[RMDB]
RNA sequence: GGGAACGACUCGAGUAGAGUCGAAAAGAACACGUUCGGUAGUACUUAAACCAGUGAUAUCCUCUCCAUUGAAGAUAAUGGACACUUCAACAACUUCAUAUUUAGGAAAUCCAAAAAUAGUUAAGAAGCUCCGUAGGAGCUUCGGCUCCUACGGAGCAAAAGAAACAACAACAACAAC
Reactivity to 2A3 in 0.01 (KOAc 150mM, MgCl2 10mM, bicine 150mM(pH8.5), 24C), signal-to-noise 2, nucleotides 027 to 126: g090a000a000c010a000c050g110u090u060c030g020g050u060a010g080u060a090c090u150u190a120a000a000c000c040a020g000u030g070a100u020a140u190c000c000u000c010u030c000c040a060u030u150g040a080a030g030a140u050a180a010u030g000g020a030c020a010c030u090u120c010a020a060c000a030a040c060u040u000c030a100u110a180u150u040u060a040g040g050a030a120a090u050c030c010a000a010a000a000a150u100a050g050u000u080a090a150g060a090a050

Chemical mapping of a 177-nucleotide RNA with 2A3. It was measured as part of the RMDB library OK1LIB. For 2A3, 1,291 sequencing reads were counted. 2A3 adducts were read by reverse transcription with SuperScript II with manganese. Values are in units of 0.01, from 0 to 300, in steps of 10. The reactions ran in a buffer of 150 mM KOAc, 10 mM MgCl2 and 150 mM bicine (pH 8.5), at 24 C.